The record gives the reactivity of an RNA of 177 nucleotides to DMS and 2A3. The 2A3 profile rests on 1,858 reads.
[RMDB]
RNA sequence: GGGAACGACUCGAGUAGAGUCGAAAAUUUUACAAUUUAUUACCAGAUAAGGAUCGCGCAGGUCGUAUGCGUAAACUAUGCAGACCAGAAACGCCUGCAAUUAUUGUGACACGUGGAUUGCAGCCACUCAUAGGCAUGCAUUCGUGCAUGCCUAUGAAAAAGAAACAACAACAACAAC
Reactivity to DMS in 0.01 (KOAc 150mM, MgCl2 10mM, bicine 150mM(pH8.5), 24C), signal-to-noise 3, nucleotides 027 to 126: u020u020u010u020a130c100a030a080u000u020u000a030u020u000a180c030c030a070g000a140u030a130a100g020g030a080u090c100g030c070g020c060a150g000g020u020c080g000u020a040u000g020c010g020u010a070a060a140c200u030a030u030g000c030a080g000a110c090c100a110g000a050a090a170c080g000c080c040u000g000c040a080a050u050u030a020u010u030g030u030g010a060c170a020c140g000u000g000g020a050u000u000g000c040a030g010c000c040a030c050
Reactivity to 2A3 in 0.01 (KOAc 150mM, MgCl2 10mM, bicine 150mM(pH8.5), 24C), signal-to-noise 4, nucleotides 027 to 126: u060u070u030u080a070c060a020a040u070u150u050a190u150u160a100c000c020a000g110a200u200a220a120g090g030a090u180c040g000c060g000c070a030g000g060u060c030g060u130a100u100g010c000g010u010a020a160a120c100u060a040u120g000c010a030g000a090c010c010a000g120a070a160a030c090g010c000c010u020g000c010a000a070u180u060a040u100u190g060u080g090a030c070a020c160g000u010g000g000a030u060u010g000c000a000g040c010c000a010c000